RNA sequence: GGGAACGACUCGAGUAGAGUCGAAAAGGCCAACAGCAGAGACUCUUAGAAGGAAGAGAAGUACACAGGAGGAGGCCCCAGAACCCUGAGGGUGCUACACUCAAAUCUAAUCCUACUCACAACUCAGCAGGCAGUCAACGUCUUGCACAAACUGCCAAUGACCGAUCAUAUUCGUAUGAUCGGUCAUAAAAGAAACAACAACAACAAC
Reactivity to 2A3 in 0.01 (KOAc 150mM, MgCl2 10mM, bicine 150mM(pH8.5), 24C), signal-to-noise 1, nucleotides 027 to 156: g010g000c000c000a080a000c030a060g100c020a020g040a010g010a110c040u140c010u140u110a020g040a210a010g170g010a010a050g030a030g000a040a020g030u110a060c080a040c040a010g030g030a010g010g010a010g040g060c000c000c010c050a030g040a110a040c000c000c050u030g010a180g010g000g070u060g050c060u110a040c040a030c070u050c010a090a050a070u050c040u010a060a000u060c010c010u010a030c020u040c040a030c000a020a150c030u060c060a120g000c030a040g110g000c000a000g010u030c050a010a010c080g050u050c050u010u280g020c140a020c050a000a070a000c020u040g000c030c000a010